[RMDB]
RNA sequence: GGGAACGACUCGAGUAGAGUCGAAAAUCGAUCAGUUAGGUUGGGCUGCGGUACUCGUGGGCCUGGCUCUGGGAUUAAGGCAACUGGUGCAACAAGGGCUUGGCAUCUUCGGCGGUGCUAUCGCUGAUACCUAUGAUUUGUUCGCAAAUCAUAGGUAAAAAGAAACAACAACAACAAC
Reactivity to DMS in 0.01 (KOAc 150mM, MgCl2 10mM, bicine 150mM(pH8.5), 24C), signal-to-noise 7, nucleotides 027 to 126: u010c060g000a090u010c050a060g010u000u010a070g020g010u000u000g000g010g010c020u000g010c040g010g010u000a060c140u010c070g050u000g010g020g010c020c030u010g010g010c020u000c040u000g010g010g010a100u000u000a080a090g010g010c060a070a090c100u000g010g010u000g000c060a060a090c110a080a090g000g000g000c050u010u000g010g010c030a060u000c050u000u000c070g000g010c050g010g020u000g010c100u000a040u010c050g010c030u000g000a170
Reactivity to 2A3 in 0.01 (KOAc 150mM, MgCl2 10mM, bicine 150mM(pH8.5), 24C), signal-to-noise 5, nucleotides 027 to 126: u070c010g010a020u060c010a010g070u060u210a060g000g040u030u050g030g010g000c030u030g000c030g040g040u100a110c040u020c120g020u070g050g040g000c020c010u020g020g000c020u010c020u060g020g020g030a050u110u100a110a030g050g000c000a040a060c070u070g050g020u060g020c030a060a050c010a070a090g060g000g000c030u050u050g030g000c020a060u010c000u080u060c040g060g000c030g000g030u050g050c060u070a030u100c020g010c040u020g010a020